[RMDB]
RNA sequence: GGGAACGACUCGAGUAGAGUCGAAAAGAUAUGGACGGUGUACCCAUCGAAGAACUCGGAAACGAGGGAGAUGGUACCCGUCCUAAGUCAAAAGAUGUAAACCUGAGUUCGCUCAGGUUUACAUCAAGGUACUAAUAUUCUUCGGAAUAUUAGUACCAAAAGAAACAACAACAACAAC
Reactivity to DMS in 0.01 (KOAc 150mM, MgCl2 10mM, bicine 150mM(pH8.5), 24C), signal-to-noise 6, nucleotides 027 to 126: g010a050u000a300u010g000g000a010c000g010g010u020g020u000a000c200c050c060a010u000c000g000a100a160g000a110a170c000u000c000g000g000a120a100a190c010g000a010g000g020g000a070g000a010u000g000g010u000a000c000c010c010g000u000c000c000u000a010a050g000u010c030a090a080a130a130g000a010u000g000u000a010a000a010c000c000u000g000a020g020u010u020c250g020c010u000c000a000g000g000u000u000u000a000c000a000u000c010a030a050
Reactivity to 2A3 in 0.01 (KOAc 150mM, MgCl2 10mM, bicine 150mM(pH8.5), 24C), signal-to-noise 5, nucleotides 027 to 126: g030a020u060a060u140g000g000a000c030g000g040u160g010u140a040c180c190c040a010u010c030g190a300a090g020a050a020c000u010c000g010g030a070a040a040c000g000a010g010g010g010a040g000a000u010g000g010u000a000c000c000c000g000u000c000c000u000a000a000g000u010c010a010a000a060a170g010a000u000g000u010a000a000a010c000c000u000g000a000g020u080u150c240g030c130u000c000a000g000g000u000u000u000a000c000a000u000c000a000a000